[RMDB]
RNA sequence: GGGAACGACUCGAGUAGAGUCGAAAACUCUGAAUGAGGUUGCGAAGGUCGAGGAGCAGGCCGUGAAGGCUCAGAUCUUCACCGACGUGUACGCGAAGAUCACGGCAGGAACCGACGAGUGGAACUCACAUUACCCAUCCUUCGGGAUGGGUAAUGUAAAAGAAACAACAACAACAAC
Reactivity to 2A3 in 0.01 (KOAc 150mM, MgCl2 10mM, bicine 150mM(pH8.5), 24C), signal-to-noise 1, nucleotides 027 to 126: c010u000c040u070g150a100a070u170g030a100g070g030u050u060g020c000g030a070a050g050g000u110c140g040a020g040g000a020g050c060a070g000g000c020c050g000u070g130a170a010g040g000c020u030c030a070g010a130u040c000u000u000c040a030c010c020g020a040c030g040u090g070u090a060c040g030c060g070a080a000g000a040u100c020a000c010g010g030c040a040g100g020a030a000c020c000g050a030c010g010a030g000u030g000g080a030a040c010u010c040
Reactivity to DMS in 0.01 (KOAc 150mM, MgCl2 10mM, bicine 150mM(pH8.5), 24C), signal-to-noise 2, nucleotides 027 to 126: c030u000c020u000g010a110a110u000g030a060g020g000u010u000g010c010g000a060a170g020g010u010c070g010a060g000g020a090g010c040a140g000g000c020c020g030u020g010a130a110g010g040c020u000c080a120g000a060u000c010u000u000c010a040c070c020g030a110c100g020u010g020u000a070c110g050c120g000a080a090g020a080u000c030a070c030g000g000c040a090g010g000a060a040c020c050g000a160c050g010a080g020u010g010g010a030a250c070u000c080
This 177-nucleotide RNA was probed chemically with 2A3 and DMS.
The RNA was probed in 150 mM KOAc, 10 mM MgCl2 and 150 mM bicine (pH 8.5) at 24 C.
It was measured as part of the RMDB library OK2TRN.